[RMDB]
Overview: An RNA of 177 nucleotides, treated with DMS and 2A3 and read out base by base. It was measured as part of the RMDB library OK1LIB. For DMS the reverse transcriptase was MarathonRT. 2A3 is a SHAPE reagent: it acylates the 2'-hydroxyl of flexible nucleotides of all four kinds. 2A3 adducts were read by reverse transcription with SuperScript II with manganese. The 2A3 profile rests on 3,945 reads.
RNA sequence: GGGAACGACUCGAGUAGAGUCGAAAAAGAACGCGUCCUGAGUAUUCCAAGUGCGAGCAGUGCCACCUGUUCUCGGAGAUGGCACUGCUCAGCACGAUUGUCCUUGCCAGUCGUGCUCUGGCAGUGAGAGGAGCAAAGUAUUCGUACUUUGCUCCUCAAAAGAAACAACAACAACAAC
Reactivity to DMS in 0.01 (KOAc 150mM, MgCl2 10mM, bicine 150mM(pH8.5), 24C), signal-to-noise 2, nucleotides 027 to 126: a040g020a060a060c140g010c020g020u000c030c020u000g000a090g010u030a090u000u000c020c020a070a120g000u040g020c000g000a010g000c000a010g010u020g000c010c000a010c010c030u000g010u000u020c100u070c060g020g000a010g000a100u010g000g000c010a000c000u010g000c000u000c000a020g020c010a000c000g000a100u030u010g010u000c050c030u010u000g000c010c010a010g020u020c080g010u010g010c060u000c020u000g000g000c040a010g000u000g000a160
Reactivity to 2A3 in 0.01 (KOAc 150mM, MgCl2 10mM, bicine 150mM(pH8.5), 24C), signal-to-noise 5, nucleotides 027 to 126: a000g130a060a030c060g000c010g040u050c020c030u010g010a020g030u050a090u080u120c070c040a190a040g010u000g010c010g000a000g000c010a000g010u000g030c010c000a020c000c000u060g100u270u170c130u120c150g040g010a080g030a160u000g000g000c000a000c000u000g000c000u000c010a000g010c000a000c010g000a010u030u130g060u050c010c020u050u060g000c000c000a000g000u100c040g120u130g010c050u020c000u040g010g020c000a030g040u080g060a080